[RMDB]
RNA sequence: GGGAACGACUCGAGUAGAGUCGAAAAGGAAGGAAUGUGCCUAGCGGGUGUGGCGAGGAGUGUAGCCAGCUGUGGGUUUUUCUUGGGGCCCAGAGAGACAUGGGCAGAGAUGGCCGCCCCGCUCCCCAUAACACAGUUUUUUCGAAAACUGUGUUAUAAAAGAAACAACAACAACAAC
Reactivity to 2A3 in 0.01 (KOAc 150mM, MgCl2 10mM, bicine 150mM(pH8.5), 24C), signal-to-noise 9, nucleotides 027 to 126: g060g030a030a040g090g100a140a110u160g060u190g100c000c010u010a010g000c000g010g000g010u280g030u030g090g010c040g030a090g090g040a090g080u130g030u080a030g070c000c010a020g010c030u050g040u090g120g010g020u030u030u010u050u040c110u110u200g030g020g070g000c010c000c000a030g020a010g000a000g010a060c070a160u100g020g010g000c020a010g000a000g010a060u130g060g000c000c010g000c000c000c000c000g000c000u010c000c000c000c000
Reactivity to DMS in 0.01 (KOAc 150mM, MgCl2 10mM, bicine 150mM(pH8.5), 24C), signal-to-noise 9, nucleotides 027 to 126: g010g010a070a050g000g020a090a110u020g010u010g010c010c010u000a030g020c020g000g010g010u050g040u010g010g020c010g010a100g010g010a130g020u020g000u010a110g020c010c010a100g010c030u000g010u010g010g010g000u000u000u010u010u040c110u020u020g010g000g000g000c010c010c010a020g000a040g000a090g020a110c170a120u010g000g000g010c010a090g010a120g010a140u010g000g000c010c010g020c010c000c000c010g010c010u000c010c000c000c260